[RMDB]
RNA sequence: GGGAACGACUCGAGUAGAGUCGAAAAUAAGGAUUGGUACGACCCAAUUGAAAACCCAAAAUAUUAUGCCAUGUUGGCUAAAAUGGGGCCUAUUGUACGACGUGCUUUAUUGAAUGCUAUUGAGUUCACCUAAGGCAAGAUUCGUCUUGCCUUAGGUAAAAGAAACAACAACAACAAC
Reactivity to 2A3 in 0.01 (KOAc 150mM, MgCl2 10mM, bicine 150mM(pH8.5), 24C), signal-to-noise 3, nucleotides 027 to 126: u130a040a030g160g000a020u020u030g020g000u030a060c070g020a050c020c010c000a010a010u030u070g050a040a020a040a040c040c000c000a070a010a010a060u210a030u100u040a050u130g000c010c020a040u140g140u300u260g120g000c010u010a050a000a000a050u090g010g000g010g010c000c020u090a120u090u130g050u040a030c010g040a000c030g080u070g010c000u140u200u030a110u060u130g090a090a030u090g010c050u030a060u100u160g040a090g030u030u080c010
Reactivity to DMS in 0.01 (KOAc 150mM, MgCl2 10mM, bicine 150mM(pH8.5), 24C), signal-to-noise 4, nucleotides 027 to 126: u010a080a120g010g000a070u000u010g010g010u000a100c130g020a130c220c010c030a040a030u000u000g000a080a070a080a140c030c010c020a050a080a110a130u020a090u000u000a090u020g010c010c000a090u010g020u020u000g000g030c000u000a010a060a080a140u000g000g010g010g020c110c010u010a050u000u000g000u000a070c080g010a090c080g020u000g020c050u010u000u000a060u010u000g010a070a060u000g000c060u000a090u010u000g000a150g010u000u000c070
The data come from the RNA Mapping Database (RMDB), library OK2TST.
This 177-nucleotide RNA was probed chemically with 2A3 and DMS.
The reactions ran in a buffer of 150 mM KOAc, 10 mM MgCl2 and 150 mM bicine (pH 8.5), at 24 C.
DMS adducts were read by reverse transcription with MarathonRT.